Record summary
An RNA of 207 nucleotides, treated with 2A3 and DMS and read out base by base. The DMS profile rests on 4,677 reads. The 2A3 profile rests on 4,317 reads. It was measured as part of the RMDB library M2RFPK. Conditions: 150 mM KOAc, 10 mM MgCl2 and 150 mM bicine (pH 8.5), 24 C. DMS adducts were read by reverse transcription with MarathonRT.
[RMDB]
RNA sequence: GGGAACGACUCGAGUAGAGUCGAAAAUACCGUCUUCUCCCCGACGGUUUCAAUCCAUAGCUUCACGUUGUGUAGCGUAGGUGGAAGGUAUCGUGUGUUGUAUAAACACCACAUAGUCUCUUAGGGGUCAAGCUGAUAAACUUCGGUUUAUCAGCAAGCUUAAGUAUCCCUUCGGGGAUACUUAAGCAAAAGAAACAACAACAACAAC
Reactivity to 2A3 in 0.01 (KOAc 150mM, MgCl2 10mM, bicine 150mM(pH8.5), 24C), signal-to-noise 4, nucleotides 027 to 156: u080a000c000c010g020u010c010u180u030c030u120c020c000c000c000g010a000c030g000g010u010u030u070c060a040a060u030c010c010a040u070a090g010c010u060u070c020a020c060g300u300u250g020u090g030u070a000g000c030g110u100a070g060g040u040g020g020a050a030g100g030u140a080u160c110g010u020g020u000g000u040u050g080u060a120u110a220a130a010c010a000c000c070a010c020a020u120a030g050u020c020u010c000u120u200a030g000g010g000g020u040c080a100a030g010c000u010g000a000u000a000a010a000c000u030u040c100g080g000u020u000u000a000u000c000a000g000c000a000a000
Reactivity to DMS in 0.01 (KOAc 150mM, MgCl2 10mM, bicine 150mM(pH8.5), 24C), signal-to-noise 2, nucleotides 027 to 156: u000a060c000c000g000u000c020u000u010c030u000c060c000c020c090g010a060c010g010g000u000u000u000c080a070a070u000c010c020a090u000a220g010c020u010u000c020a050c050g030u000u000g020u000g020u000a000g030c000g040u000a050g020g050u010g020g020a090a100g000g010u000a040u000c140g030u000g000u000g020u000u000g000u010a160u010a090a030a120c010a020c020c010a030c030a100u000a100g030u000c010u010c040u000u000a150g020g020g000g020u000c060a060a180g010c000u010g000a000u000a010a010a010c000u000u010c300g060g020u000u000u000a000u000c000a000g000c010a010a050